Conditions: 150 mM KOAc, 10 mM MgCl2 and 150 mM bicine (pH 8.5), 24 C. Chemical mapping of a 177-nucleotide RNA with DMS. DMS adducts were read by reverse transcription with MarathonRT.
[RMDB]
RNA sequence: GGGAACGACUCGAGUAGAGUCGAAAAAGACGGAUCCGACGGUGAGGGACGAAAGCUCGGGUCACGAACCGGAUUAGAUACCCGGGUAGUCCGAGCUGUAAACGAUGUCUGCUAGGUGUGGCACAGGGUUAGGCUAAAGGUUCGCCUUUAGCCUAACAAAAGAAACAACAACAACAAC
Reactivity to DMS in 0.01 (KOAc 150mM, MgCl2 10mM, bicine 150mM(pH8.5), 24C), signal-to-noise 2, nucleotides 027 to 126: a050g020a080c070g000g010a070u010c030c020g020a070c080g010g010u000g000a080g020g000g030a050c150g010a100a130a050g000c010u000c000g000g010g040u030c300a060c040g010a100a300c020c000g000g000a020u000u000a100g040a080u020a120c150c000c000g040g000g000u010a150g000u010c000c020g000a020g000c000u000g010u020a020a050a150c120g000a080u010g000u000c000u000g020c080u010a040g040g050u000g000u030g010g010c060a080c090a100g020g000